This 177-nucleotide RNA was probed chemically with DMS and 2A3. Source: RMDB library TTRINS, as collected in RNAgym.
[RMDB]
RNA sequence: GGGAACGACUCGAGUAGAGUCGAAAAGAUAUGGAGCGUCAUUCGUGAUGACCGUAGCUAAUCCGCUGUACAAUCGGAAACGAUUGUACAGCGGAUAACUACGCAAGCGAGGGACGCUCCUAAGUCACUAUAUUAAUUCGUUCGCGAAUUAAUAUAGAAAAGAAACAACAACAACAAC
Reactivity to DMS in 0.01 (KOAc 150mM, MgCl2 10mM, bicine 150mM(pH8.5), 24C), signal-to-noise 5, nucleotides 027 to 126: g010a040u000a300u000g000g000a010g020c000g020u000c000a060u010u000c000g020u000g010a110u020g000a200c300c020g010u000a000g010c010u000a080a090u000c000c010g030c000u000g000u000a000c000a010a010u000c000g020g000a110a110a230c010g010a010u000u000g000u000a000c000a010g000c010g010g000a000u000a000a070c000u000a000c000g000c040a070a150g010c000g020a020g010g000g020a010c010g000c000u000c000c000u000a000a060g010u000c040a280
Reactivity to 2A3 in 0.01 (KOAc 150mM, MgCl2 10mM, bicine 150mM(pH8.5), 24C), signal-to-noise 1, nucleotides 027 to 126: g030a010u080a030u160g000g000a000g000c020g020u010c020a040u000u000c010g030u000g070a280u200g050a090c100c020g030u010a000g020c010u030a300a250u100c020c030g000c010u000g020u050a000c000a000a040u010c020g040g070a120a080a080c020g020a000u000u020g020u000a000c000a000g020c030g010g000a000u030a000a000c000u000a000c000g030c000a070a190g020c000g000a010g000g050g010a000c010g020c000u000c000c000u000a000a000g010u010c000a020